This 177-nucleotide RNA was probed chemically with DMS and 2A3. Values are in units of 0.01, from 0 to 300, in steps of 10. The reactions ran in a buffer of 150 mM KOAc, 10 mM MgCl2 and 150 mM bicine (pH 8.5), at 24 C. Reactivities are given for positions 27 through 126. For 2A3 the reverse transcriptase was SuperScript II with manganese.
RNA sequence: GGGAACGACUCGAGUAGAGUCGAAAAACAUUACUUAGAACAAAGGCAGUUAAUGGCAGUAGACAAAUUAAGCAGGCUGAUCUCGAUAAUGUUAUUCAGAAUUUAAAUCCUUCAGCUUUUCAGGGAACUUCAUACGCUAAUUCGUUAGCGUAUGAAGAAAAGAAACAACAACAACAAC
Reactivity to DMS in 0.01 (KOAc 150mM, MgCl2 10mM, bicine 150mM(pH8.5), 24C), signal-to-noise 4, nucleotides 027 to 126: a070c040a030u000u000a060c070u000u000a100g010a090a090c110a090a110a100g010g000c030a080g010u010u000a060a060u010g000g000c080a080g010u000a080g000a060c080a070a090a060u000u010a060a080g010c060a030g010g010c030u010g020a050u010c020u000c060g020a050u000a050a060u010g010u000u010a080u000u000c080a070g010a080a070u010u000u000a070a090a090u000c030c030u000u010c110a070g000c100u000u010u000u010c070a070g000g000g010a060a180
Reactivity to 2A3 in 0.01 (KOAc 150mM, MgCl2 10mM, bicine 150mM(pH8.5), 24C), signal-to-noise 3, nucleotides 027 to 126: a020c030a030u090u080a050c000u080u060a040g060a150a010c010a080a070a020g030g000c010a030g010u070u090a080a060u100g080g000c020a020g030u050a040g050a030c020a040a150a030u090u070a070a010g040c020a000g030g030c000u010g030a050u010c050u020c030g060a050u040a150a040u060g030u060u030a030u100u070c020a030g040a110a040u060u150u100a130a130a070u040c010c000u030u040c040a050g080c000u120u090u080u030c040a010g070g000g000a030a030